[RMDB]
RNA sequence: GGGAACGACUCGAGUAGAGUCGAAAAAGUCCAAUAUCAUUCUUUACCUAAACAUCCAGUUUGGAUUUGAAAUACAUGUUUUCCUUAGUCAUGCCAGUUUGGGUUUUAAAGAGACUUAAUUCAUAAUUCAGUGACUGCUCACCCAGCUGUCAUUGUACCUAAAUGAUGCAUUCGUGCAUCAUUUAGGAAAAGAAACAACAACAACAAC
Reactivity to DMS in 0.01 (KOAc 150mM, MgCl2 10mM, bicine 150mM(pH8.5), 24C), signal-to-noise 2, nucleotides 027 to 156: a120g030u000c040c040a100a190u000a120u010c040a100u010u000c030u000u000u000a090c000c020u000a040a050a130c050a160u020c070c060a100g000u000u000u020g000g020a070u000u000u010g000a050a070a140u000a070c120a070u000g010u000u010u000u000c080c030u000u010a100g000u010c050a050u000g010c010c070a150g010u000u000u000g020g000g010u000u010u010u000a010a040a080g020a170g010a070c060u000u000a080a120u010u010c020a110u000a090a150u010u000c040a060g050u000g000a040c000u000g060c040u010c080a230c050c040c020a280g010c020u020g030u000c010a100u010u010g040u000a150
Reactivity to 2A3 in 0.01 (KOAc 150mM, MgCl2 10mM, bicine 150mM(pH8.5), 24C), signal-to-noise 6, nucleotides 027 to 156: a000g090u040c040c000a050a040u200a130u170c060a130u160u070c050u090u130u080a070c010c020u070a050a030a030c030a040u040c030c020a150g110u100u130u130g100g000a060u050u050u200g100a080a090a010u150a050c050a040u070g060u030u050u070u110c020c020u080u070a050g030u110c020a020u040g020c040c020a010g000u020u090u110g010g000g000u010u030u040u170a040a050a010g040a000g020a010c010u050u050a060a070u200u120c080a080u130a250a070u140u030c010a010g010u010g060a030c010u040g000c000u010c010a060c000c010c000a010g000c000u010g000u010c000a000u000u050g010u020a030